[RMDB]
RNA sequence: GGGAACGACUCGAGUAGAGUCGAAAAGGCCAGCUCUCCGCGGCUAAGCCGUCAAUGGCGACGACGCCAAGAAAGCGGUUCUCGACGGUCGGUGUAAGACCAUGCUGCAGCUCGGCCGUGACAAGCCGGUAAUCGUAGGUUUCGACCUACGAUUACCAAAAGAAACAACAACAACAAC
Reactivity to DMS in 0.01 (KOAc 150mM, MgCl2 10mM, bicine 150mM(pH8.5), 24C), signal-to-noise 3, nucleotides 027 to 126: g000g030c000c020a030g000c000u000c080u030c110c160g020c050g000g000c010u000a170a120g010c000c000g020u000c120a090a160u040g000g000c020g010a130c300g000a120c090g000c000c030a030a040g010a120a170a140g000c060g000g010u000u010c080u020c110g000a150c100g000g000u000c020g000g020u020g050u000a120a100g010a060c000c010a110u010g000c030u000g000c030a100g000c010u000c160g000g000c000c010g000u000g020a180c090a130a050g060c030c120
Reactivity to 2A3 in 0.01 (KOAc 150mM, MgCl2 10mM, bicine 150mM(pH8.5), 24C), signal-to-noise 5, nucleotides 027 to 126: g010g010c010c010a000g000c020u030c010u060c090c040g020c030g000g000c010u040a070a010g010c010c010g070u090c040a080a160u120g020g020c020g000a080c120g060a040c060g050c000c000a020a020g100a060a100a000g030c010g020g000u090u010c110u040c060g110a110c060g000g020u020c000g000g090u120g060u150a160a060g050a080c000c000a030u100g000c020u050g010c030a000g020c020u050c100g020g000c010c000g000u020g000a030c030a020a060g010c040c040